[RMDB]
RNA sequence: GGGAACGACUCGAGUAGAGUCGAAAAACCUUUGUGUUGACUGCUUGGAUUUAUCACGAUUCAACGGACGCCCAUUGGGCGUCCGCGCAUUUCGUGAUUGUCAGCAGCAACACUCUGGUAAAAACCCAAUCGAAGUAUUCGUACUUCGAUUGGGUAACUUAGGAGUAGGCUUCGGCCUACUCCUAAGAAAAGAAACAACAACAACAAC
Reactivity to 2A3 in 0.01 (KOAc 150mM, MgCl2 10mM, bicine 150mM(pH8.5), 24C), signal-to-noise 1, nucleotides 027 to 156: a000c020c000u040u000u000g090u030g000u030u020g160a300c000u000g060c030u160u300g210g040a070u300u300u180a020u100c000a000c000g010a010u020u030c050a010a030c000g030g010a000c000g000c000c040c100a300u300u300g020g020g000c000g060u010c030c010g020c000g010c040a050u040u080u040c010g000u000g000a000u000u020g000u000c000a030g000c000a000g000c000a000a000c000a000c010u000c000u020g000g010u060a100a040a040a150a000c010c010c010a000a010u010c000g000a000a010g000u010a040u050u280c300g060u080a000c000u000u000c000g010a000u010u010g000g000g000u010a000a000

Structure probing data (2A3) for a 207-nucleotide construct. The reactions ran in a buffer of 150 mM KOAc, 10 mM MgCl2 and 150 mM bicine (pH 8.5), at 24 C. The 2A3 profile rests on 604 reads. It was measured as part of the RMDB library RNAMAK.